[RMDB]
RNA sequence: GGGAACGACUCGAGUAGAGUCGAAAAUGCCGUCGAUGCCCUGUGCGAACAGAUCGUGGCCGGCGCCGACCGCGACGGCGACGUGUUGGUGCUAUGCGGCGCCACCUUGAUCGUGUGGACCACCAUCAUCACGUCACAGGUUCGCCUGUGACGUGAUAAAAGAAACAACAACAACAAC
Reactivity to 2A3 in 0.01 (KOAc 150mM, MgCl2 10mM, bicine 150mM(pH8.5), 24C), signal-to-noise 2, nucleotides 027 to 126: u070g020c000c000g040u080c030g020a040u100g000c010c000c010u040g040u040g030c020g010a050a000c030a040g080a130u070c020g000u050g110g010c000c050g000g020c010g010c030c060g090a080c030c040g040c010g040a010c000g020g000c030g020a010c010g000u040g070u070u140g020g020u160g030c030u060a040u220g080c050g020g000c030g000c000c000a010c000c000u070u100g110a180u240c060g040u070g030u060g140g000a030c020c000a020c020c000a080u110c020
Reactivity to DMS in 0.01 (KOAc 150mM, MgCl2 10mM, bicine 150mM(pH8.5), 24C), signal-to-noise 2, nucleotides 027 to 126: u030g000c030c000g010u010c110g020a090u000g000c020c020c050u000g000u000g000c120g000a090a040c060a070g020a060u000c040g030u010g000g020c010c030g000g000c020g010c020c110g000a120c250c130g010c020g000a010c010g000g000c000g000a040c030g020u000g020u000u000g000g010u020g020c080u000a110u020g020c070g020g000c010g010c030c020a010c010c040u000u000g000a120u020c140g000u010g020u000g030g000a160c090c040a080c080c080a080u010c090
Chemical mapping of a 177-nucleotide RNA with 2A3 and DMS. Values cover nucleotides 27 to 126. For DMS the reverse transcriptase was MarathonRT.